[RMDB]
RNA sequence: GGGAACGACUCGAGUAGAGUCGAAAAGAAUUGGCGGCUGCGGGGACAGCCUUGCGGCUAGGCAGGGGGCGGGCCGCCGCGUGGGUCCGGCAGUCCCUCCUCCCGCCAAGGCGCCGCCCAGACCCGCCUGAGACAUACUAUUCGUAGUAUGUCUCAGAAAAGAAACAACAACAACAAC
Reactivity to 2A3 in 0.01 (KOAc 150mM, MgCl2 10mM, bicine 150mM(pH8.5), 24C), signal-to-noise 4, nucleotides 027 to 126: g060a040a140u140u060g010g010c030g020g010c070u130g030c060g030g020g000g040a070c070a060g060c010c020u020u050g030c030g020g050c040u050a040g030g000c040a020g000g010g000g000g020c040g000g010g010c020c010g040c040c000g000c030g020u120g050g070g010u070c030c000g000g000c020a020g070u160c000c000c000u010c000c000u000c000c000c000g000c020c000a000a010g030g000c020g000c000c030g050c000c010c000a060g030a100c010c000c000g000c020
Reactivity to DMS in 0.01 (KOAc 150mM, MgCl2 10mM, bicine 150mM(pH8.5), 24C), signal-to-noise 7, nucleotides 027 to 126: g000a120a140u010u000g010g020c020g000g000c050u000g020c050g000g000g010g010a180c130a200g010c010c010u000u010g010c100g010g000c040u000a070g020g020c110a080g000g010g000g010g000c300g000g000g010c020c040g020c010c010g010c080g020u000g010g010g000u000c120c010g000g010c010a050g010u000c000c000c000u000c010c000u000c170c000c010g010c030c060a030a030g010g000c040g010c020c110g010c000c020c040a090g000a140c030c000c000g010c060